[RMDB]
RNA sequence: GGGAACGACUCGAGUAGAGUCGAAAAGGGAUGAGCCGCAUGCCGGGCGGGAGGGACGAGGUCGGGGAAGGGGAGACCCCGAGGAGGAUCUCCAGCUAAAGAGUGGAGGAAAUCUCGGAAAGCUUCCAAGCAACUGUCUUCGGACAGUUGAAAAGAAACAACAACAACAAC
Reactivity to 2A3 in 0.01 (KOAc 150mM, MgCl2 10mM, bicine 150mM(pH8.5), 24C), signal-to-noise 9, nucleotides 027 to 129: g040g000g010a040u070g020a030g040c020c010g050c080a050u170g070c020c020g040g020g070c130g030g020g030a220g020g000g000a010c070g070a040g040g050u080c040g010g000g000g010a040a050g060g010g000g000a020g010a010c000c000c000c000g000a020g040g050a020g010g010a020u010c000u000c000c020a040g030c030u080a080a100a030g170a080g070u060g000g000a010g000g010a040a050a030u030c010u000c000g000g000a060a040a000g030c020u060u000c020c000a030a030g020
Reactivity to DMS in 0.01 (KOAc 150mM, MgCl2 10mM, bicine 150mM(pH8.5), 24C), signal-to-noise 5, nucleotides 027 to 129: g000g000g000a110u000g030a070g030c040c040g020c140a080u080g070c020c040g000g000g080c100g000g010g010a130g000g000g000a000c110g020a090g030g040u050c070g010g000g010g010a060a050g040g010g010g010a060g020a000c030c030c010c010g030a000g000g030a000g020g030a120u040c020u040c000c000a050g020c050u050a040a060a110g040a300g050u000g020g030a030g010g000a040a100a070u000c020u020c000g000g000a000a000a000g000c010u000u000c020c060a020a030g030
The record gives the reactivity of an RNA of 170 nucleotides to 2A3 and DMS.
It was measured as part of the RMDB library 15KLIB.
The 2A3 profile rests on 42,337 reads.
Values cover nucleotides 27 to 129.
The RNA was probed in 150 mM KOAc, 10 mM MgCl2 and 150 mM bicine (pH 8.5) at 24 C.